About this RNA
Structure probing data (DMS and 2A3) for a 177-nucleotide construct. The DMS profile rests on 7,963 reads.
RNA sequence: GGGAACGACUCGAGUAGAGUCGAAAAGAUAUGGACCACAUGGAGCUGAGCCAUCGGAAACGAUGGAACAGCUAUGAAGUAUGGUCCUAAGUCAAAACCGCUUUAACAGUUCGCUGUUAAAGCGGAAGAGUAUAACGGAGUUCGCUCCGUUAUACUCAAAAGAAACAACAACAACAAC
Reactivity to DMS in 0.01 (KOAc 150mM, MgCl2 10mM, bicine 150mM(pH8.5), 24C), signal-to-noise 4, nucleotides 027 to 126: g000a020u000a020u010g000g000a020c010c000a010c040a010u010g000g000a000g020c000u000g000a070g010c010c000a000u000c000g020g000a020a010a030c010g010a020u000g010g020a020a040c010a010g030c000u000a180u010g010a120a190g000u000a050u000g000g000u000c000c000u000a010a060g000u000c010a100a070a130a210c000c000g010c000u000u010u000a000a010c010a000g010u010u010c250g020c010u000g010u000u000a000a000a010g010c000g000g010a010a020
Reactivity to 2A3 in 0.01 (KOAc 150mM, MgCl2 10mM, bicine 150mM(pH8.5), 24C), signal-to-noise 4, nucleotides 027 to 126: g010a000u020a010u060g000g000a000c000c000a000c010a010u020g030g000a010g010c000u000g010a010g040c010c000a000u000c000g000g000a030a000a000c000g000a000u010g010g000a010a010c010a000g030c010u060a300u020g000a000a000g010u020a010u020g000g010u000c000c000u000a010a010g010u000c010a000a000a110a190c000c000g010c000u000u000u010a010a010c000a010g030u070u120c230g150c170u000g000u010u000a010a000a000g000c000g000g000a000a010